[RMDB]
RNA sequence: GGGAACGACUCGAGUAGAGUCGAAAACUGUGGGAGGCCAAGACGGGUGAAUGACUUGAGCUGAAGAUCAGCUUGGACAACAGAGCAAAACCCUGCCUCUACUAAAAAUACGAAAACUAGCUGGGUGUGCACAUCUGUAGUCCUGGCUACUUGGGAAGUAUGCCAUUAAUUUCGAUUAAUGGCAUACAAAAGAAACAACAACAACAAC
Reactivity to 2A3 in 0.01 (KOAc 150mM, MgCl2 10mM, bicine 150mM(pH8.5), 24C), signal-to-noise 5, nucleotides 027 to 156: c050u040g000u120g060g020g020a030g020g000c030c030a080a030g040a060c090g010g010g040u050g080a130a100u090g030a070c050u060u050g010a020g010c020u040g040a090a010g050a130u110c020a010g010c010u010u030g030g000a010c000a050a010c010a080g030a010g000c020a000a030a020a090c010c000c000u010g010c000c010u040c030u050a040c010u050a010a080a020a020a020u140a050c040g050a020a020a080a080c050u030a010g020c010u030g020g010g010u050g040u060g050c020a010c010a170u060c050u040g020u050a040g030u010c010c000u000g000g010c000u020a040c030u050u020g060g000g000a110a000
Reactivity to DMS in 0.01 (KOAc 150mM, MgCl2 10mM, bicine 150mM(pH8.5), 24C), signal-to-noise 2, nucleotides 027 to 156: c050u010g020u010g030g010g000a150g030g040c060c060a030a090g020a060c080g040g010g000u010g020a090a100u000g010a130c030u000u000g010a080g040c030u010g000a070a180g000a060u000c030a060g020c000u010u000g010g010a090c000a090a040c050a060g000a150g010c010a060a070a100a290c010c010c000u000g000c010c040u010c010u010a100c060u020a030a070a060a080a100u010a120c090g020a090a060a070a060c080u000a050g020c020u000g020g000g020u000g010u000g000c040a100c060a060u020c030u000g010u000a080g030u000c010c000u010g010g000c020u000a010c040u000u000g000g040g020a100a190